[RMDB]
This 177-nucleotide RNA was probed chemically with 2A3 and DMS. Values are in units of 0.01, from 0 to 300, in steps of 10. For 2A3, 1,299 sequencing reads were counted. It was measured as part of the RMDB library OK2TST.
RNA sequence: GGGAACGACUCGAGUAGAGUCGAAAAUACGCCAGUUUUGCCAGAACGGUGCCGGAGAAUAUGAGCAACAACGAGAUUUUCCGGCAGUGGAAGGCACCAGCCGUUUGUCGGCCAGCCUGGCAACGGGCCUCUUUGUGUGUUUCGACACACAAAGAGGAAAAGAAACAACAACAACAAC
Reactivity to 2A3 in 0.01 (KOAc 150mM, MgCl2 10mM, bicine 150mM(pH8.5), 24C), signal-to-noise 2, nucleotides 027 to 126: u170a010c030g000c020c000a010g020u040u030u080u130g060c000c000a010g030a090a030c040g080g020u040g010c000c020g000g010a010g020a000a020u130a110u220g070a030g110c060a020a150c000a060a020c080g040a030g050a200u020u000u010u000c010c000g030g050c000a000g010u020g010g040a080a070g060g000c040a020c010c010a020g050c000c020g010u090u170u200g180u090c020g010g010c000c000a010g030c000c000u020g020g060c010a000a010c060g080g060g060
Reactivity to DMS in 0.01 (KOAc 150mM, MgCl2 10mM, bicine 150mM(pH8.5), 24C), signal-to-noise 2, nucleotides 027 to 126: u010a140c150g020c010c020a030g000u000u000u010u000g070c000c000a060g000a130a190c070g010g010u020g010c000c000g010g000a050g000a000a020u000a030u020g020a300g040c110a130a030c300a090a250c040g010a130g000a050u000u000u000u000c000c020g020g030c010a020g000u000g000g010a170a090g000g000c050a070c090c130a230g010c000c020g000u000u020u000g040u000c060g010g000c020c060a100g020c150c030u010g010g010c010a030a010c230g000g000g010